[RMDB]
RNA sequence: GGGAACGACUCGAGUAGAGUCGAAAAGACGCCUGUGUGGCGAAGCGAGAAUGAGAAAGUGCCGCACAUUAAACAGUCCAUCUAGCGGCAAGAUGGAUUGCUCGCAAAAAGAUCCAUAUCACUGAGAAUAAUACCCGAUAUUCGUAUCGGGUAUUAUAAAAGAAACAACAACAACAAC
Reactivity to 2A3 in 0.01 (KOAc 150mM, MgCl2 10mM, bicine 150mM(pH8.5), 24C), signal-to-noise 6, nucleotides 027 to 126: g040a020c030g100c060c000u130g010u040g040u100g050g000c040g010a060a000g040c010g010a020g050a070a140u220g010a080g100a140a170a000g090u080g040c000c000g030c000a020c000a050u060u120a030a030a010c010a010g010u000c010c000a000u000c010u020a030g050c020g050g000c030a020a000g000a000u000g010g000a000u000u040g030c020u010c020g040c010a030a050a030a050a000g040a030u040c040c030a070u080a040u200c070a060c120u110g050a030g060a210
Reactivity to DMS in 0.01 (KOAc 150mM, MgCl2 10mM, bicine 150mM(pH8.5), 24C), signal-to-noise 5, nucleotides 027 to 126: g010a100c150g000c010c030u020g020u000g020u020g010g010c010g000a080a120g010c010g010a030g000a140a100u030g010a130g000a100a090a120g010u020g010c010c010g010c030a100c030a070u030u030a040a080a170c050a020g000u000c020c000a010u000c000u000a110g010c020g000g000c010a080a010g000a010u000g000g000a010u010u000g000c020u000c040g020c030a070a070a060a040a080g000a090u020c030c040a050u010a080u010c080a070c100u010g000a070g000a160